Conditions: 150 mM KOAc, 10 mM MgCl2 and 150 mM bicine (pH 8.5), 24 C.
Structure probing data (2A3) for a 207-nucleotide construct.
2A3 adducts were read by reverse transcription with SuperScript II with manganese.
RNA sequence: GGGAACGACUCGAGUAGAGUCGAAAAGGGACGCCUUUAGAAGAAGAGGCUAGGUGGUAUUCCGGUGUGGGAUACUUGGUAAUAUGUAACGCUAAUUGCAUAAGAUUGUAAGACGGAAUUUACAGUCAAAACGGUCCUGCGUUCGCGCAGGACCGAAGAUCACGCUUUUGUUCGCAAAAGCGUGAUCAAAAGAAACAACAACAACAAC
Reactivity to 2A3 in 0.01 (KOAc 150mM, MgCl2 10mM, bicine 150mM(pH8.5), 24C), signal-to-noise 1, nucleotides 027 to 156: g000g000g010a010c060g000c030c040u080u030u090a300g050a300a030g030a040a000g020a050g010g020c030u080a040g000g050u040g000g000u030a030u070u040c050c030g030g080u200g020u160g090g000g000a000u000a020c020u020u050g050g010u110a110a060u050a130u100g050u020a120a020c020g000c110u040a240a070u050u060g000c020a030u030a180a080g010a040u000u000g020u000a010a040g070a110c130g060g000a040a070u080u000u000a000c020a000g000u000c040a000a000a050a100c020g010g000u000c000c000u010g020c010g000u040u060c180g000c010g040c140a010g000g040a000c010c000g010a000a000
Source information
The data come from the RNA Mapping Database (RMDB), library M2RFPK. Reactivities are rounded to 0.1 and cut off at 0 and 3.